[RMDB]
RNA sequence: GGGAACGACUCGAGUAGAGUCGAAAAGCGUACUACCGUGUGGUACAGGAGGUGGGAUGGAGGAUAUCCCAAAUAGGAUAUUGAAGUCCCACUACCCACCCUGUACGUAACAUCACGGUAUCGCAAACUACAGUCGAUGUUCGCAUCGACUGUAGAACUAUAACUGAUGGUUCGCCAUCAGUUAUAGAAAAGAAACAACAACAACAAC
Reactivity to 2A3 in 0.01 (KOAc 150mM, MgCl2 10mM, bicine 150mM(pH8.5), 24C), signal-to-noise 5, nucleotides 027 to 156: g020c010g050u120a110c030u010a000c010c000g010u000g020u030g070g010u000a010c010a010g000g000a030g000g010u000g000g010g000a000u040g000g050a080g100g080a020u020a010u030c030c040c030a120a150a050u300a110g010g000a000u010a010u000u110g030a040a010g010u010c020c010c030a000c000u000a000c000c010c000a030c020c000c000u000g000u010a000c000g030u060a100a070c040a110u210c010a010c010g000g000u000a020u120c000g000c030a050a040a040c000u000a000c000a000g000u000c000g000a000u000g030u060u110c290g010c130a000u000c000g000a000c000u000g000u000a000g000a000a000
Reactivity to DMS in 0.01 (KOAc 150mM, MgCl2 10mM, bicine 150mM(pH8.5), 24C), signal-to-noise 3, nucleotides 027 to 156: g030c020g040u010a090c080u000a010c000c000g040u000g060u000g010g040u000a020c000a050g020g030a150g030g030u000g020g030g010a030u010g010g010a300g000g030a010u000a010u000c000c000c050a060a160a160u010a060g000g000a030u000a010u000u000g000a300a300g040u000c000c000c010a030c000u000a020c020c000c060a300c130c010c000u000g020u010a000c010g040u000a130a110c120a090u000c000a020c000g010g030u010a010u000c050g000c010a080a060a230c000u000a010c010a000g030u000c020g000a030u000g010u000u010c290g050c030a010u000c020g010a030c010u000g000u010a000g000a080a180

Structure probing data (2A3 and DMS) for a 207-nucleotide construct. For 2A3, 5,935 sequencing reads were counted. For DMS the reverse transcriptase was MarathonRT.